[RMDB]
RNA sequence: GGGAACGACUCGAGUAGAGUCGAAAAGAUAUGGACGUUCCAUGGAUCAAUAAGUAUGGCGUUUGACGUAAGAUCGGAAACGAUCUUACCGAGCCAUACUGAACUUCCAUGGAGACGUCCUAAGUCAUCUUCGCAGGAAGUUCGCUUCCUGCGAAGAAAAAGAAACAACAACAACAAC
Reactivity to DMS in 0.01 (KOAc 150mM, MgCl2 10mM, bicine 150mM(pH8.5), 24C), signal-to-noise 1, nucleotides 027 to 126: g040a090u010a300u000g000g010a030c000g030u010u000c000c000a000u000g000g000a050u010c010a040a160u010a070a080g040u000a000u000g000g010c010g020u010u000u010g040a190c300g020u010a010a020g000a000u000c010g010g010a110a100a120c010g010a000u010c000u010u000a000c010c020g010a150g010c000c000a000u000a010c000u000g000a080a220c140u000u000c020c020a040u010g010g000a030g000a000c000g010u000c020c020u000a010a100g010u000c010a160
This 177-nucleotide RNA was probed chemically with DMS. The reactions ran in a buffer of 150 mM KOAc, 10 mM MgCl2 and 150 mM bicine (pH 8.5), at 24 C.